Structure probing data (DMS and 2A3) for a 177-nucleotide construct. Conditions: 150 mM KOAc, 10 mM MgCl2 and 150 mM bicine (pH 8.5), 24 C. Source: RMDB libraries RFM100 and RFMREP, as collected in RNAgym. Values cover nucleotides 27 to 126.

RNA sequence: GGGAACGACUCGAGUAGAGUCGAAAAGUGUUAGGGUGUGGAAACCCCAGCGCGAAAUGAAAGUGAAGGGCAGCGUAAGUUGUCUGAGGUAGGAAAUGCUGCGGGCUUCGGUCUGCGGUGUGGCACUGACAAUAAACGAGUUCGCUCGUUUAUUGUCAAAAGAAACAACAACAACAAC
Reactivity to DMS in 0.01 (KOAc 150mM, MgCl2 10mM, bicine 150mM(pH8.5), 24C), signal-to-noise 3, nucleotides 027 to 126: g000u000g010u000u000a120g020g020g000u010g030u040g000g000a160a140a070c000c000c000c020a030g020c010g010c010g030a070a140a050u040g000a110a070a120g000u000g020a190a220g000g000g020c000a030g020c010g040u030a110a100g000u000u000g000u000c010u000g000a040g000g010u000a080g000g000a110a110a030u010g000c000u000g010c000g000g000g010c010u010u050c150g020g010u000c000u010g000c010g000g000u010g020u010g010g000c100a100c110u020
Reactivity to 2A3 in 0.01 (KOAc 150mM, MgCl2 10mM, bicine 150mM(pH8.5), 24C), signal-to-noise 4, nucleotides 027 to 126: g030u020g030u020u050a080g010g030g010u070g030u060g090g190a060a050a010c010c010c000c010a010g000c010g000c010g020a150a020a050u270g050a140a070a030g120u100g090a050a070g010g000g000c010a030g000c010g030u130a110a150g010u100u010g020u060c030u010g020a030g020g060u140a050g010g080a110a120a030u030g030c000u000g010c030g000g010g000c010u040u080c210g050g000u000c000u020g010c020g000g020u020g010u030g030g000c040a020c080u050